Source: RMDB library OK1LIB, as collected in RNAgym. Chemical mapping of a 177-nucleotide RNA with 2A3.
[RMDB]
RNA sequence: GGGAACGACUCGAGUAGAGUCGAAAAAACAAAGUGAGUAACCCCUAAACUCAACCCAAUCAUCUAAACCCUCAAGGAGUGUGCCCAAAACAUCUUUAUGGUCAUCGGGUCUCUGUCUUGUCAGCACCUCAGACGCUCAUUUCGAUGAGCGUCUGAGAAAAGAAACAACAACAACAAC
Reactivity to 2A3 in 0.01 (KOAc 150mM, MgCl2 10mM, bicine 150mM(pH8.5), 24C), signal-to-noise 1, nucleotides 027 to 126: a000a000c170a040a100a010g040u050g070a000g050u040a110a120c070c000c000c000u010a080a120a000c060u100c000a020a000c000c000c000a020a020u120c010a000u000c000u010a090a000a000c090c000c000u060c010a000a000g020g000a030g010u080g000u160g040c010c000c020a000a090a000a060c000a040u000c010u050u010u160a120u180g000g140u110c130a120u020c080g020g000g000u000c000u000c010u000g130u030c000u000u080g040u040c070a050g000c000a070c030
Reactivities are rounded to 0.1 and cut off at 0 and 3.